[RMDB]
RNA sequence: GGGAACGACUCGAGUAGAGUCGAAAACUUCCCAUUUAUUUGCUGCUUGUAGUCUCACAGUGAUACGAGCAGUUAUACGCAUGGGAUAAAAUAACAUUGGGCCACUGUAAAUUGAGAUGAAGUAACCGAUUAUUAACGUGUUCGCACGUUAAUAAUCAAAAGAAACAACAACAACAAC
Reactivity to 2A3 in 0.01 (KOAc 150mM, MgCl2 10mM, bicine 150mM(pH8.5), 24C), signal-to-noise 4, nucleotides 027 to 126: c020u020u000c000c000c010a000u090u160u040a120u020u070u080g010c000u000g000c000u000u010g000u070a170g150u030c010u030c060a140c050a100g070u060g100a010u000a020c010g000a000g000c020a010g000u010u030a030u010a020c060g030c030a020u020g000g000g030a030u090a100a160a030a040u110a080a030c050a070u020u150g040g060g000c010c030a030c020u020g030u090a100a160a180u100u190g070a130g030a120u200g120a130a040g100u110a040a030c060c040
Reactivity to DMS in 0.01 (KOAc 150mM, MgCl2 10mM, bicine 150mM(pH8.5), 24C), signal-to-noise 4, nucleotides 027 to 126: c190u000u000c000c000c000a070u010u000u000a070u010u010u000g010c010u000g000c010u000u000g000u000a020g010u000c030u000c240a120c170a100g000u000g010a110u000a020c010g000a020g000c020a030g010u000u000a030u000a100c240g010c180a030u010g000g000g000a090u010a040a060a100a060u000a100a070c090a130u000u000g000g000g000c060c030a050c060u000g000u000a060a060a110u010u020g000a120g000a050u010g010a090a150g010u010a060a110c150c160